RNA sequence: GGGAACGACUCGAGUAGAGUCGAAAACGAAGUAAAACAAACAUUAAAGGAUCUUGCAAAUCAUGGUGUAAGUAUCGUCACCAUAGGACAGUAUUUACGUCCUUCAAGAUUACACAUACCAGUAAAAACAUGAGCAUCAGUUCGCUGAUGCUCAUGUAAAAGAAACAACAACAACAAC
Reactivity to 2A3 in 0.01 (KOAc 150mM, MgCl2 10mM, bicine 150mM(pH8.5), 24C), signal-to-noise 2, nucleotides 027 to 126: c000g070a080a000g130u230a040a100a070a050c110a120a080a000c000a050u120u210a100a070a010g110g000a010u000c000u010u050g000c060a040a070a110u090c050a060u110g000g000u000g010u070a050a060g090u090a080u170c100g090u060c030a060c010c050a060u030a010g000g010a000c000a010g090u040a180u050u180u100a050c060g020u000c000c000u000u010c000a000a010g000a010u000u090a070c070a020c000a050u090a070c000c020a030g040u190a000a120a000a000
Reactivity to DMS in 0.01 (KOAc 150mM, MgCl2 10mM, bicine 150mM(pH8.5), 24C), signal-to-noise 2, nucleotides 027 to 126: c080g010a040a070g080u030a080a050a040a070c170a100a060a070c100a070u000u000a010a140a210g020g010a060u010c010u000u000g020c170a070a040a090u030c160a050u010g000g000u000g010u000a030a080g030u010a080u000c090g020u000c000a070c020c050a020u000a020g030g000a010c000a080g000u000a130u000u030u010a060c100g000u010c010c020u000u000c020a000a000g010a010u020u000a100c070a040c170a000u000a060c070c010a060g020u000a030a040a080a050